[RMDB]
RNA sequence: GGGAACGACUCGAGUAGAGUCGAAAAGCGACGUCAAAGUGACGCCAGGCACGAAGCACGUAGAGGAGAGACCUAAAGUCCAAGAGAUUCAAGCGGCCGACCCCAUGGCCACCGCGUACUUGUGCGCGAACUGGUUGAAAUUCGUUUCAACCAGUUCAAAAGAAACAACAACAACAAC
Reactivity to DMS in 0.01 (KOAc 150mM, MgCl2 10mM, bicine 150mM(pH8.5), 24C), signal-to-noise 9, nucleotides 027 to 126: g020c070g020a060c040g010u000c030a090a100a170g010u010g010a050c050g010c020c030a070g010g010c030a050c050g000a080a090g010c050a040c070g010u000a060g010a080g000g010a100g010a110g000a070c030c040u000a050a080a130g000u000c020c040a070a100g000a110g010a100u010u010c090a080a080g020c060g010g000c010c010g000a090c070c010c040c050a060u000g000g000c010c020a060c090c060g000c020g010u000a040c060u000u000g020u000g010c030g020c090
Reactivity to 2A3 in 0.01 (KOAc 150mM, MgCl2 10mM, bicine 150mM(pH8.5), 24C), signal-to-noise 6, nucleotides 027 to 126: g040c040g080a090c020g020u050c040a110a120a180g100u090g070a010c020g010c030c020a060g050g000c020a010c090g070a040a010g020c040a000c070g040u060a040g000a030g100g020a040g010a010g020a050c000c000u130a120a060a020g020u000c020c010a080a020g060a010g000a080u080u130c060a090a020g050c040g050g000c020c010g050a090c010c000c000c020a030u040g020g000c010c010a020c020c030g000c000g000u010a030c030u060u100g030u020g070c020g000c000
Structure probing data (DMS and 2A3) for a 177-nucleotide construct. Values cover nucleotides 27 to 126. Values are in units of 0.01, from 0 to 300, in steps of 10. The 2A3 profile rests on 19,688 reads. For DMS, 15,371 sequencing reads were counted.